Annotation
An RNA of 207 nucleotides, treated with 2A3 and read out base by base. Values cover nucleotides 27 to 156. The 2A3 profile rests on 540 reads. It was measured as part of the RMDB library M2RFPK.
RNA sequence: GGGAACGACUCGAGUAGAGUCGAAAAGGUGCUCUGAAUGGAGUGCUCUACUGAGAUUAUAAAACAGAAGGUAAGCUAUUAUCUCUUACAACAGGGCAGGGCUUGUUGGAAUAGGCGGUAAAGUCUAAAAACUACCUCACCUUCGGGUGAGGUAGAAGAACCACUAUGUGUUCGCACAUAGUGGUUCAAAAGAAACAACAACAACAAC
Reactivity to 2A3 in 0.01 (KOAc 150mM, MgCl2 10mM, bicine 150mM(pH8.5), 24C), signal-to-noise 1, nucleotides 027 to 156: g060g060u120g000c010u010c000u070g220a110a020u290g010g030a020g010u040g000c010u000c000u050a090c050u050g010a030g000a040u120u150a120u190a080a120a040a030c080a030g090a120a000g160g020u100a050a000g040c010u010a050u220u020a010u110c020u020c000u000u020a060c020a110a070c030a050g000g050g000c000a000g050g050g020c030u010u020g000u040u020g000g000a100a030u060a050g030g020c160g000g030u180a130a020a030g000u020c020u050a090a070a000a000a000c050u000a000c000c020u010c000a000c020c000u030u000c160g030g060g000u000g010a010g000g000u000a000g000a000a000